[RMDB]
RNA sequence: GGGAACGACUCGAGUAGAGUCGAAAAGAUAUGGAAGCAUAUUCCUCUCUGCCCGGCUUCGAUAAGAGGGUAUCGGAAACGAUAUGCCUCUUUUGACGAAGUCAGAGAGGAAUAUGCUUCCUAAGUCGGUUUAUUUACAGUUCGCUGUAAAUAAACCAAAAGAAACAACAACAACAAC
Reactivity to DMS in 0.01 (KOAc 150mM, MgCl2 10mM, bicine 150mM(pH8.5), 24C), signal-to-noise 3, nucleotides 027 to 126: g010a100u000a300u010g000g000a000a000g020c000a010u000a010u000u010c000c000u000c000u000c000u000g010c300c200c230g000g000c070u000u000c000g020a130u000a000a000g000a030g000g000g030u000a000u000c010g010g010a150a100a210c010g010a000u000a010u000g000c000c000u000c000u000u000u000u000g020a170c130g020a060a010g030u000c000a020g010a020g000a010g000g000a000a000u000a000u000g000c000u000u000c000c000u000a010a070g000u000c070